[RMDB]
Record summary: An RNA of 177 nucleotides, treated with 2A3 and DMS and read out base by base. DMS adducts were read by reverse transcription with MarathonRT. Values cover nucleotides 27 to 126. It was measured as part of the RMDB library OK2TST. High DMS reactivity at an A or C suggests that its Watson-Crick edge is free.
RNA sequence: GGGAACGACUCGAGUAGAGUCGAAAACGGCCAGAUGGUCCUUUCGGAUCAGAGACGCCUUGCUCUAUAGAGGAAGCUGUUUCUCUUUCUCUAGUAAACCUCUGCACCUACACUCCUCGUGUAUGUCUCAUUACUUAUGCUUCGGCAUAAGUAAUGAAAAAGAAACAACAACAACAAC
Reactivity to 2A3 in 0.01 (KOAc 150mM, MgCl2 10mM, bicine 150mM(pH8.5), 24C), signal-to-noise 9, nucleotides 027 to 126: c030g010g000c020c010a080g050a300u050g020g020u020c010c010u130u300u260c190g010g000a010u000c010a010g010a010g010a080c060g000c010c000u030u090g030c020u020c020u070a100u040a070g010a010g020g020a010a010g010c090u070g040u030u040u000c020u000c000u010u020u000c010u000c000u010a020g040u120a080a150a120c010c020u050c060u100g020c050a030c020c010u040a020c030a010c040u110c030c020u080c070g010u010g010u030a070u100g090u010c030
Reactivity to DMS in 0.01 (KOAc 150mM, MgCl2 10mM, bicine 150mM(pH8.5), 24C), signal-to-noise 8, nucleotides 027 to 126: c200g000g010c060c070a120g020a140u000g010g000u000c000c010u000u010u010c210g010g010a020u000c020a030g010a170g010a120c160g010c050c010u000u000g000c040u000c040u010a150u000a030g000a020g000g000a020a010g000c100u010g010u000u000u000c010u000c010u000u000u000c000u000c010u000a020g010u000a070a090a120c080c030u000c080u000g010c080a080c040c020u000a060c050a070c030u000c090c100u000c100g000u000g010u000a030u000g010u010c090